[RMDB]
Structure probing data (DMS and 2A3) for a 207-nucleotide construct. 2A3 adducts were read by reverse transcription with SuperScript II with manganese. The RNA was probed in 150 mM KOAc, 10 mM MgCl2 and 150 mM bicine (pH 8.5) at 24 C.
RNA sequence: GGGAACGACUCGAGUAGAGUCGAAAACACAAUUCUCUAAGCGAUGAGAAGCGUGUGGAAAAUUAGGGAAGGGCUACGGCUAUAAUCCUAAGAAAGCUUAUCUACGAGCGGAGGUAUUCUCAGAACGAAAACCAUUUGGCGUUCGCGCCAAAUGGAACUCAUAAAAUUCGUUCGCGAAUUUUAUGAGAAAAGAAACAACAACAACAAC
Reactivity to DMS in 0.01 (KOAc 150mM, MgCl2 10mM, bicine 150mM(pH8.5), 24C), signal-to-noise 1, nucleotides 027 to 156: c000a040c000a070a130u000u000c000u010c000u000a230a150g010c150g030a290u010g030a060g000a040a020g020c280g000u000g020u000g040g000a080a040a080a110u010u000a050g050g000g000a120a140g000g040g000c030u000a050c110g090g010c050u000a070u000a040a030u000c000c000u000a020a120g000a110a100a120g030c020u010u000a060u000c030u000a080c140g020a060g000c060g010g000a080g010g000u010a090u000u000c010u000c000a200g000a080a150c030g000a070a030a080a170c000c000a010u020u000u000g000g010c000g030u000u000c300g090c000g010c000c000a040a020a000u000g000g000a010a020
Reactivity to 2A3 in 0.01 (KOAc 150mM, MgCl2 10mM, bicine 150mM(pH8.5), 24C), signal-to-noise 2, nucleotides 027 to 156: c040a000c000a030a030u050u000c000u020c010u060a140a170g170c060g110a110u060g010a030g000a020a020g020c060g020u020g000u090g000g040a070a100a060a030u110u050a060g000g030g010a030a070g070g020g000c020u060a010c160g040g000c010u010a020u040a200a040u070c030c010u050a020a010g050a060a070a000g010c000u050u050a030u120c020u050a070c060g020a020g010c020g000g030a010g010g040u050a090u070u060c060u000c040a060g060a140a020c060g040a060a060a060a080c000c000a000u000u000u020g020g000c010g020u050u050c210g010c000g000c050c000a000a000a000u000g000g000a000a000
For 2A3, 1,417 sequencing reads were counted. DMS adducts were read by reverse transcription with MarathonRT. Source: RMDB library M2RFPK, as collected in RNAgym. The DMS profile rests on 1,604 reads.